Chemical mapping of a 207-nucleotide RNA with 2A3. Reactivities are given for positions 27 through 156. High 2A3 reactivity points to a flexible backbone, as in loops and unpaired stretches. The reactions ran in a buffer of 150 mM KOAc, 10 mM MgCl2 and 150 mM bicine (pH 8.5), at 24 C.

[RMDB]
RNA sequence: GGGAACGACUCGAGUAGAGUCGAAAAAGAGCCGGAUACGUCCGGCUCAACGGGGGAUACGUGUGGUGCCGUCCGCUCCCCCUAUGGCAUAACAAAUGCACCUCACACUAGGCUACGGCCUAGUGAAAAAAGGUGUAUGUGUUCGCACAUACACCAACCGAUUGAAAAUGUUCGCAUUUUCAAUCGGAAAAGAAACAACAACAACAAC
Reactivity to 2A3 in 0.01 (KOAc 150mM, MgCl2 10mM, bicine 150mM(pH8.5), 24C), signal-to-noise 2, nucleotides 027 to 156: a000g000a000g000c000c000g020g010a010u030a060c150g070u010c000c000g000g000c010u000c000a020a020c010g000g010g000g000g010a010u060a130c030g010u030g020u010g040g010u000g010c010c020g010u040c000c040g090c060u040c000c000c000c000c000u040a170u120g150g000c090a130u050a240a090c050a080a060a020u090g010c010a010c000c000u020c010a050c000a000c000u000a000g000g000c000u020a030c290g060g000c000c000u010a000g000u020g020a020a000a000a000a000a000g000g010u000g010u000a000u000g000u000g010u010u050c150g000c060a000c000a000u000a000c000a000c000c010a000a020